An RNA of 177 nucleotides, treated with DMS and 2A3 and read out base by base. For DMS the reverse transcriptase was MarathonRT. It was measured as part of the RMDB library M2PK50. The reactions ran in a buffer of 150 mM KOAc, 10 mM MgCl2 and 150 mM bicine (pH 8.5), at 24 C. For DMS, 1,857 sequencing reads were counted.

RNA sequence: GGGAACGACUCGAGUAGAGUCGAAAAAAGGACUGGUUCGCCAGUCCUUAUUCAUUCGUACGCAACGAAGCGUAAGUCAUUACGCAAAUGAGUAAAAGCGUAUACGAAAGGACUUCGGUCCUUUCAAACUCCUCACGAAAUUCGUUUCGUGAGGAGUAAAAGAAACAACAACAACAAC
Reactivity to DMS in 0.01 (KOAc 150mM, MgCl2 10mM, bicine 150mM(pH8.5), 24C), signal-to-noise 2, nucleotides 027 to 126: a030a020g000g010a010c020u000g000g000u010u020c180g020c000c000a000g000u010c000c000u000u010a000u000u000c030a100u010u000c120g020u010a010c020g010c020a100a030c100g010a150a160g000c000g000u000a010a010g000u030c300a070u000u000a000c010g010c010a060a100a140u010g000a140g010u000a020a070a060a090g000c020g000u000a000u000a090c160g000a000a010a010g000g010a010c000u000u000c180g050g010u000c000c000u010u000u000c000a120a080
Reactivity to 2A3 in 0.01 (KOAc 150mM, MgCl2 10mM, bicine 150mM(pH8.5), 24C), signal-to-noise 2, nucleotides 027 to 126: a000a040g020g000a010c020u010g010g010u030u040c120g050c040c000a000g010u030c000c000u000u000a000u020u000c000a010u010u040c010g070u010a010c000g010c090a100a010c050g050a110a040g000c010g010u020a000a000g120u120c140a250u040u030a000c000g010c010a070a070a050u270g070a100g070u180a090a060a020a010g020c020g020u000a020u020a040c060g000a000a000a000g020g010a000c000u020u060c160g070g010u000c000c000u020u020u000c010a020a010